[RMDB]
RNA sequence: GGGAACGACUCGAGUAGAGUCGAAAACACAUGAUUCGUCAUGUGAAAAAGCGUACUACGUAGUGAUGACCCAUAGAGAGAGUAAUCCUUUCCCAAAUAGGAAAGGUGCUCUCCUAUGGCAAGCUACGUAUCGCAAAAACUGGACUUCGGUCCAGAACUCUUCACGGACUUUCGAGUCCGUGAAGAGAAAAGAAACAACAACAACAAC
Reactivity to 2A3 in 0.01 (KOAc 150mM, MgCl2 10mM, bicine 150mM(pH8.5), 24C), signal-to-noise 2, nucleotides 027 to 156: c000a000c000a010u000g000a060u080u130c220g110u010c120a000u000g000u100g060a110a000a020a010a040g010c020g000u060a070c050u000a010c020g030u030a020g000u050g130a290u110g020a140c030c000c010a000u010a000g300a000g000a000g010a020g010u010a060a230u110c010c020u050u000u000c040c010c040a300a300a070u280a150g000g010a000a000a000g000g020u000g010c000u000c000u000c000c000u000a020u000g040g020c020a050a090g000c000u000a010c000g000u000a030u040c000g000c000a000a040a000a000a150c000u000g000g000a020c000u050u040c300g050g030u010c010c120a000g050a030a000
Chemical mapping of a 207-nucleotide RNA with 2A3. For 2A3 the reverse transcriptase was SuperScript II with manganese.